[RMDB]
RNA sequence: GGGAACGACUCGAGUAGAGUCGAAAACGUGCGUGACGAGCACGCUUGCGAUCAGCCCGCUCGUCGAUCUCGAACCGAUCAGCCUGUCGUGGCUCAACGACAAAUUGCGGCUGAGCGAGCACGAGAAUACGCACGCUAGUUUCGACUAGCGUGCGUAAAAAGAAACAACAACAACAAC
Reactivity to 2A3 in 0.01 (KOAc 150mM, MgCl2 10mM, bicine 150mM(pH8.5), 24C), signal-to-noise 2, nucleotides 027 to 126: c000g030u040g000c000g010u020g000a020c010g000a020g010c010a000c050g010c000u020u070g200c060g180a230u160c090a030g010c000c020c040g010c070u080c010g010u000c020g020a130u010c020u020c020g040a080a040c020c000g040a020u020c020a000g030c000c000u050g000u010c020g010u010g130g030c200u080c150a100a000c020g030a010c000a000a070a030u300u270g080c030g000g000c000u000g000a010g000c010g010a010g000c080a010c080g000a000g010a000a080
Reactivity to DMS in 0.01 (KOAc 150mM, MgCl2 10mM, bicine 150mM(pH8.5), 24C), signal-to-noise 2, nucleotides 027 to 126: c010g000u000g020c020g030u000g040a030c030g000a300g020c000a090c110g000c000u020u000g030c170g020a090u020c180a110g000c000c060c040g000c060u000c020g010u010c000g000a150u010c010u000c010g010a090a080c050c030g000a020u010c000a010g010c010c020u000g020u000c000g000u000g000g000c220u010c200a070a020c020g000a010c020a060a040a190u010u010g050c190g000g020c000u030g000a020g000c020g000a050g010c150a120c000g000a060g000a070a220